[RMDB]
RNA sequence: GGGAACGACUCGAGUAGAGUCGAAAAGAUAUGGAAAUAUUGGGACAUGGGGUGUCGGAAACGACACGCCAACAGCCCACUGUAUUUCCUAAGUCAAAAGAGUCUGGCACUUCGGUGCCAGACUCAACAUCGCUGUUAAGUUCGCUUAACAGCGAUGAAAAGAAACAACAACAACAAC
Reactivity to DMS in 0.01 (KOAc 150mM, MgCl2 10mM, bicine 150mM(pH8.5), 24C), signal-to-noise 2, nucleotides 027 to 126: g000a040u000a300u000g000g000a020a000a010u000a000u000u000g000g000g000a090c110a180u010g000g010g010g030u010g000u000c000g000g000a120a060a210c010g030a010c010a000c000g000c000c000a020a060c280a110g000c010c000c000a020c300u030g010u000a020u000u000u000c000c000u020a070a150g010u000c000a060a130a090a110g000a030g030u000c000u000g010g000c000a020c000u000u000c230g030g010u000g010c000c010a000g000a000c010u010c000a010a140